Source information: This 177-nucleotide RNA was probed chemically with DMS and 2A3. Reactivities are given for positions 27 through 126. Source: RMDB library VIROID, as collected in RNAgym. The reactions ran in a buffer of 150 mM KOAc, 10 mM MgCl2 and 150 mM bicine (pH 8.5), at 24 C. For DMS the reverse transcriptase was MarathonRT.
[RMDB]
RNA sequence: GGGAACGACUCGAGUAGAGUCGAAAAGGUGCCCUAUUCGGAGCACUGCAGUUCCCGAUAGAAAGGCUAAGCACCUCGCAAUGACGUAAGGUGGGACUUUUCCUUCUGGAACCAAGCGGUUGGUUCCGGAACCAAUAAUGUUCGCAUUAUUGGUUCCAAAAGAAACAACAACAACAAC
Reactivity to DMS in 0.01 (KOAc 150mM, MgCl2 10mM, bicine 150mM(pH8.5), 24C), signal-to-noise 8, nucleotides 027 to 126: g010g010u000g010c000c010c000u010a190u010u010c220g000g010a080g010c000a010c010u000g010c160a160g010u000u000c000c000c010g010a070u010a050g010a010a030a020g010g010c070u000a090a130g010c020a020c000c000u000c030g010c030a180a150u010g010a140c160g010u010a050a030g000g010u000g010g000g010a140c020u000u000u000u000c000c060u000u010c050u000g010g000a010a000c000c010a030a060g020c200g020g000u000u000g010g000u000u000c010c010
Reactivity to 2A3 in 0.01 (KOAc 150mM, MgCl2 10mM, bicine 150mM(pH8.5), 24C), signal-to-noise 8, nucleotides 027 to 126: g020g010u020g000c010c000c010u080a240u110u300c170g010g000a110g030c000a010c010u040g000c020a010g000u010u000c010c000c000g000a020u040a080g080a020a060a000g020g000c050u050a040a010g080c000a020c010c000u000c010g000c030a160a300u300g110a180c040g030u060a030a040g020g000u010g020g030g050a090c000u040u020u030u000c000c020u020u040c050u070g000g000a000a010c000c000a040a010g130c100g300g070u030u010g020g000u000u010c010c000